[RMDB]
RNA sequence: GGGAACGACUCGAGUAGAGUCGAAAAGUUGACACGGACAACAUGUUUCCGCAGGGCACACCCCAGUGCUUCGACGAUACUUGUCUUACCAACACCAGGGCUUCCUUCCAGCAGAAUUGCACGGCGCGCAUUAAGCAUUAUUCGUAAUGCUUAAUGCAAAAGAAACAACAACAACAAC
Reactivity to 2A3 in 0.01 (KOAc 150mM, MgCl2 10mM, bicine 150mM(pH8.5), 24C), signal-to-noise 9, nucleotides 027 to 126: g060u050u050g040a050c030a030c120g060g030a020c020a110a010c050a140u140g060u020u060u020c020c010g010c050a060g000g040g000c020a010c000a040c020c010c000c010a020g020u020g050c000u070u060c020g030a030c020g020a030u040a110c030u050u080g020u030c000u030u100a060c020c020a040a030c020a020c040c030a040g020g050g000c010u050u030c010c000u040u040c010c010a010g010c010a010g090a170a130u120u080g020c030a030c060g050g020c030g010c000
Reactivity to DMS in 0.01 (KOAc 150mM, MgCl2 10mM, bicine 150mM(pH8.5), 24C), signal-to-noise 8, nucleotides 027 to 126: g000u010u000g000a130c080a090c110g000g000a090c090a070a060c090a090u030g020u000u010u010c010c010g020c130a130g010g000g000c040a040c050a080c040c010c010c020a070g010u000g010c040u000u010c040g010a070c080g000a140u010a020c040u000u000g010u010c030u010u010a170c040c050a080a060c100a080c060c040a070g010g000g000c040u010u000c020c020u000u000c030c020a060g010c070a070g010a050a080u020u010g000c030a070c070g000g000c070g020c100

An RNA of 177 nucleotides, treated with 2A3 and DMS and read out base by base. Source: RMDB library OK1LIB, as collected in RNAgym. For DMS the reverse transcriptase was MarathonRT. For 2A3 the reverse transcriptase was SuperScript II with manganese. 2A3 is a SHAPE reagent: it acylates the 2'-hydroxyl of flexible nucleotides of all four kinds. The RNA was probed in 150 mM KOAc, 10 mM MgCl2 and 150 mM bicine (pH 8.5) at 24 C. For DMS, 21,437 sequencing reads were counted.